[RMDB]
RNA sequence: GGGAACGACUCGAGUAGAGUCGAAAAGUCGCCGAGGCGAGCUACCUCGCAUGGCGGGCAAUGGUCGAGGGCCGCACGGUAAGCAAGGGCCUCCUCUACGACACCCGCGAGGCGCCCGGCGAUAUCGACCUAGCCGACGAGAAGGCCGUCAUGGCGGCAUUCCCUCUGCCUUCGGGCAGAGGGAAUGAAAAGAAACAACAACAACAAC
Reactivity to 2A3 in 0.01 (KOAc 150mM, MgCl2 10mM, bicine 150mM(pH8.5), 24C), signal-to-noise 1, nucleotides 027 to 156: g000u010c000g000c010c000g010a230g000g000c000g010a000g080c070u140a080c010c010u000c000g040c100a170u220g240g050c090g000g000g020c040a040a040u090g080g000u030c030g000a010g010g020g020c020c030g100c110a080c120g120g080u200a100a030g090c070a070a140g000g030g030c000c010u050c010c000u040c010u040a040c010g060a050c000a000c060c000c000g000c010g020a000g020g000c010g000c000c020c010g000g000c010g000a000u000a000u010c010g000a000c000c000u060a070g130c010c000g030a090c020g000a000g010a110a030g050g010c030c000g050u100c120a080u230g100g000c000g000g000